[RMDB]
Chemical mapping of a 177-nucleotide RNA with DMS and 2A3.
The data come from the RNA Mapping Database (RMDB), library OK2TRN.
Reactivities are given for positions 27 through 126.
2A3 adducts were read by reverse transcription with SuperScript II with manganese.
The RNA was probed in 150 mM KOAc, 10 mM MgCl2 and 150 mM bicine (pH 8.5) at 24 C.

RNA sequence: GGGAACGACUCGAGUAGAGUCGAAAACAUCCACUGCUACGGCAGUGGAUGAACGAGGUAGGUACGCCUACCUCGAAAGCAGGAUGUUUGCAUAGACAUUAAACGUCCAUGGUACGCCAUGGACGAACGACUGCAUUACUUUCGAGUAAUGCAGUCGAAAAGAAACAACAACAACAAC
Reactivity to DMS in 0.01 (KOAc 150mM, MgCl2 10mM, bicine 150mM(pH8.5), 24C), signal-to-noise 2, nucleotides 027 to 126: c000a010u000c000c000a010c020u000g010c010u010a090c240g050g010c010a010g050u000g000g010a000u000g000a030a080c010g010a020g000g020u000a000g000g000u000a150c240g020c020c000u000a000c000c000u010c000g000a010a040a120g000c100a010g000g000a020u010g010u000u000u000g000c070a130u020a060g010a020c010a020u000u000a060a080a150c020g000u000c000c000a000u010g000g000u000a080c280g040c000c000a000u000g000g010a000c000g010a010a040
Reactivity to 2A3 in 0.01 (KOAc 150mM, MgCl2 10mM, bicine 150mM(pH8.5), 24C), signal-to-noise 3, nucleotides 027 to 126: c000a000u000c000c000a010c000u010g000c000u010a080c180g140g010c000a000g000u010g010g000a000u000g000a000a000c020g000a010g000g010u000a000g000g000u040a000c220g080c020c000u000a000c000c000u000c000g010a020a000a000g060c060a040g130g070a040u060g030u040u050u070g100c130a150u140a130g030a020c010a020u060u110a120a150a020c020g000u000c000c000a000u000g000g000u030a030c260g030c040c000a000u010g030g000a000c000g000a000a000